Chemical mapping of a 177-nucleotide RNA with DMS. DMS adducts were read by reverse transcription with MarathonRT. The RNA was probed in 150 mM KOAc, 10 mM MgCl2 and 150 mM bicine (pH 8.5) at 24 C. Values cover nucleotides 27 to 126. The data come from the RNA Mapping Database (RMDB), library OK2TST.
RNA sequence: GGGAACGACUCGAGUAGAGUCGAAAAUUAUAACAAGUAUCGCUAUUUUAGUGGCAAAAUGGAUACUGCUGCUUACAGAGAGGCUGCCUGUUCGCAACUGGCAAAGGCUAUGGAAACUUUUAACCAAGCUGACUAUCGUAUUCGUACGAUAGUCAGCAAAAGAAACAACAACAACAAC
Reactivity to DMS in 0.01 (KOAc 150mM, MgCl2 10mM, bicine 150mM(pH8.5), 24C), signal-to-noise 1, nucleotides 027 to 126: u060u020a110u000a160a110c110a120a040g020u020a030u000c020g000c050u000a050u000u000u000u020a090g020u000g010g000c010a090a000a080a000u000g000g010a100u000a010c070u000g010c060u000g020c040u000u010a070c100a020g000a130g000a100g010g020c090u000g000c040c000u000g020u000u000c120g020c170a100a090c050u000g000g000c020a070a090a300g010g000c020u020a070u000g010g000a100a130a100c050u000u000u000u000a030a170c050c020a030a110